Background:
Conditions: 150 mM KOAc, 10 mM MgCl2 and 150 mM bicine (pH 8.5), 24 C. Chemical mapping of a 177-nucleotide RNA with DMS and 2A3. It was measured as part of the RMDB library OK2TRN.
[RMDB]
RNA sequence: GGGAACGACUCGAGUAGAGUCGAAAAGGGAUGUUGCUGUCACAGUAAUUGAUAAAGAUUUGUGUAAACGAGUUCAGAUAGGAGAUAUAGAACUAAUUGUACAAGCAUCUAUUGCUAAUGAAUACAACACCCAGUAGAGGUUCGCCUCUACUGGGUGAAAAGAAACAACAACAACAAC
Reactivity to DMS in 0.01 (KOAc 150mM, MgCl2 10mM, bicine 150mM(pH8.5), 24C), signal-to-noise 2, nucleotides 027 to 126: g010g020g010a090u000g020u000u000g020c080u000g000u000c050a090c120a040g000u000a030a030u000u020g010a070u010a120a080a200g000a150u000u000u010g000u000g000u010a030a070a070c300g000a030g000u000u000c030a120g010a080u010a030g000g040a080g020a080u000a010u010a090g010a020a050c010u000a060a110u000u000g010u000a030c050a030a030g000c060a070u000c080u000a060u010u000g000c020u000a080a110u010g010a070a100u000a060c100a050a080
Reactivity to 2A3 in 0.01 (KOAc 150mM, MgCl2 10mM, bicine 150mM(pH8.5), 24C), signal-to-noise 2, nucleotides 027 to 126: g100g000g000a070u030g030u010u030g050c040u030g020u010c010a010c010a040g010u040a080a050u060u060g040a110u080a170a150a100g130a180u010u020u070g060u000g020u000a000a020a090c090g040a020g010u000u020c060a000g050a210u130a040g090g030a130g060a060u070a020u040a140g040a040a000c000u010a030a060u040u000g060u030a020c010a030a010g000c010a030u040c020u060a030u080u060g020c010u090a100a120u200g060a080a030u080a080c010a040a000